[RMDB]
RNA sequence: GGGAACGACUCGAGUAGAGUCGAAAAGACGCUGAUGCGAUCGACUGUAAGAUAGAUAUACUGAGGAGACAGAUACGUACGGCAAGUAUCGUCGCCAGAAGUACAGUCGCAAAUUGCCGUACGAAGACCUGAGUCGGCUCUUCGGAGCCGACUCAGGAAAAGAAACAACAACAACAAC
Reactivity to 2A3 in 0.01 (KOAc 150mM, MgCl2 10mM, bicine 150mM(pH8.5), 24C), signal-to-noise 1, nucleotides 027 to 126: g190a000c180g050c080u300g030a050u300g000c050g080a150u000c000g000a000c000u090g050u230a100a100g050a190u250a150g060a000u100a080u000a260c050u130g100a000g040g040a090g000a000c030a140g000a030u000a030c000g000u000a000c000g000g040c010a000a000g020u010a000u100c000g000u000c000g150c130c080a060g180a200a050g000u090a000c000a000g000u000c000g000c140a000a000a000u000u000g000c000c000g030u050a050c050g110a040a020g020a030